[RMDB]
RNA sequence: GGGAACGACUCGAGUAGAGUCGAAAAAUUCGUCUCUGGUUUAGUGUCUGGCAUCGAUUAAGAGACUUGCUGGUUUGUUGUGUCAACGGGGCAAACUGGGACUUUCACCGAUGACUGGGCUCAUCAUCCGGGUGUGUUCGUCCAAGCCGGAGAGCCGCUUAAGCAAAUACUUCGGUAUUUGCUUAAGAAAAGAAACAACAACAACAAC
Reactivity to 2A3 in 0.01 (KOAc 150mM, MgCl2 10mM, bicine 150mM(pH8.5), 24C), signal-to-noise 3, nucleotides 027 to 156: a000u140u090c060g000u010c000u000c000u030g100g040u070u100u100a120g020u080g070u130c160u150g120g020c050a100u080c080g060a050u090u100a180a010g010a010g010a010c000u010u300g010c000u000g000g000u000u010u000g000u000u000g000u010g000u010c000a000a000c000g000g010g010g000c000a010a010a010c000u000g020g000g010a000c010u140u140u150c210a080c040c000g010a010u000g000a000c000u010g050g020g000c000u010c010a090u020c010a060u010c090c000g000g020g020u100g000u010g040u070u080c090g050u040c060c020a050a040g120c000c010g010g000a030g000a010g010c000c010g000
Reactivity to DMS in 0.01 (KOAc 150mM, MgCl2 10mM, bicine 150mM(pH8.5), 24C), signal-to-noise 2, nucleotides 027 to 156: a130u000u010c080g020u000c010u010c050u010g010g020u000u000u000a080g000u000g020u010c090u020g020g040c040a110u000c060g000a100u000u000a100a070g010a060g000a050c010u000u000g020c010u010g020g030u000u010u000g020u000u000g030u000g000u000c040a050a120c030g000g010g000g000c030a010a020a040c010u000g000g020g010a090c030u010u010u010c300a010c000c000g010a060u010g000a020c010u020g040g020g040c020u000c040a140u010c080a180u010c000c020g010g020g010u000g030u000g020u000u010c090g020u010c060c020a040a120g000c040c000g010g000a080g000a060g010c010c020g000